[RMDB]
RNA sequence: GGGAACGACUCGAGUAGAGUCGAAAACGGCACCGGCUGGCCUUCGGCUUGCAAUGUCCUAUUAUGAGUUGCUGCCGAGCGCGGACAAACCCCAGACCAGCAUCACUAUCCAUGGUGUGCCCUACACGGCCACUCUGGGGCCAUCAGGCAGGGAGAAGCUACACCAAUUAUUCGUAAUUGGUGUAGCAAAAGAAACAACAACAACAAC
Reactivity to 2A3 in 0.01 (KOAc 150mM, MgCl2 10mM, bicine 150mM(pH8.5), 24C), signal-to-noise 1, nucleotides 027 to 156: c040g060g000c070a010c000c050g060g060c010u020g020g040c000c000u000u070c030g000g010c070u130u290g050c020a000a040u030g120u210c060c040u090a120u300u090a110u300g070a000g040u000u020g000c040u030g000c020c000g000a010g020c070g000c030g070g060a080c100a050a080a010c000c000c000c000a010g070a080c040c050a020g050c040a000u070c010a080c060u090a020u120c030c040a080u050g000g030u000g110u110g020c020c010c010u090a120c090a040c000g000g000c000c020a030c000u040c040u000g010g000g000g000c020c000a110u040c030a000g040g000c020a030g010g080g000a080g020a030a010